[RMDB]
Chemical mapping of a 177-nucleotide RNA with 2A3 and DMS. As a SHAPE reagent, 2A3 marks flexible, mostly unpaired nucleotides at the ribose 2'-OH. The data come from the RNA Mapping Database (RMDB), library OK2TST. 2A3 adducts were read by reverse transcription with SuperScript II with manganese.
RNA sequence: GGGAACGACUCGAGUAGAGUCGAAAAAAGGGAGUGGACCAAAUCGUGGACCAGGUGGUCAAUCCCAAGGUGGCUACCAUAUUCGAGCCAAAGAUCGAGAGCAUUGUCUACAAGUACCUGGGCAUCAAGGUAAUUUACUCUUCGGAGUAAAUUACCUAAAAGAAACAACAACAACAAC
Reactivity to 2A3 in 0.01 (KOAc 150mM, MgCl2 10mM, bicine 150mM(pH8.5), 24C), signal-to-noise 2, nucleotides 027 to 126: a000a000g090g020g030a120g070u140g040g000a020c000c040a040a020a050u130c080g040u090g020g000a040c030c020a020g040g000u030g000g000u030c010a040a040u040c010c000c010a010a000g090g040u040g000g060c020u050a030c020c080a030u070a090u250u200c060g050a030g060c040c070a070a050a040g120a080u140c080g020a010g000a000g140c040a070u080u240g030u050c020u050a030c020a110a000g060u010a030c010c010u010g020g000g030c020a040u110c040a090
Reactivity to DMS in 0.01 (KOAc 150mM, MgCl2 10mM, bicine 150mM(pH8.5), 24C), signal-to-noise 2, nucleotides 027 to 126: a060a070g000g010g010a070g020u030g000g000a080c020c040a110a080a060u020c080g030u010g020g020a100c040c040a050g020g040u000g020g010u000c030a090a060u010c010c010c030a100a080g000g040u000g010g000c010u010a100c070c060a100u010a140u010u000c040g000a020g000c030c060a070a100a080g010a070u000c050g000a120g000a070g010c070a110u010u010g010u010c020u000a040c070a040a040g000u010a050c010c030u000g000g000g000c110a050u000c160a080